[RMDB]
RNA sequence: GGGAACGACUCGAGUAGAGUCGAAAAAGUGAGUAUGGCUCGUUACGACGAGCCAUACUCACAACGCUUUUCCUAAAUCGUCGUGAGACGGACCUUGGAAAACCUAGUAUUUAAAUAACUAGGUCAAAUUAGCCUAGAUCCUUCGGGAUCUAGGCAACCAUGUAAAUGGCUUCGGCCAUUUACAUGGAAAAGAAACAACAACAACAAC
Reactivity to 2A3 in 0.01 (KOAc 150mM, MgCl2 10mM, bicine 150mM(pH8.5), 24C), signal-to-noise 1, nucleotides 027 to 156: a000g000u000g000a000g000u010a000u010g000g000c020u010c060g080u120u110a110c300g010a000c020g000a020g090c010c000a000u000a000c000u000c000a020c000a000a000c000g020c000u050u050u000u020c000c000u000a010a000a120u090c010g000u000c020g030u020g100a110g010a000c000g020g010a010c000c100u080u070g090g010a020a020a020a020c000c000u000a000g030u040a100u080u230u130a160a300a250u160a050a000c000u010a000g000g000u000c000a000a000a060u060u120a050g000c000c000u000a000g000a020u000c000c000u010u130c210g070g000g010a000u010c000u000a000g000g020c000a000a000

The data come from the RNA Mapping Database (RMDB), library M2RFPK. Chemical mapping of a 207-nucleotide RNA with 2A3. For 2A3, 542 sequencing reads were counted. The reactions ran in a buffer of 150 mM KOAc, 10 mM MgCl2 and 150 mM bicine (pH 8.5), at 24 C.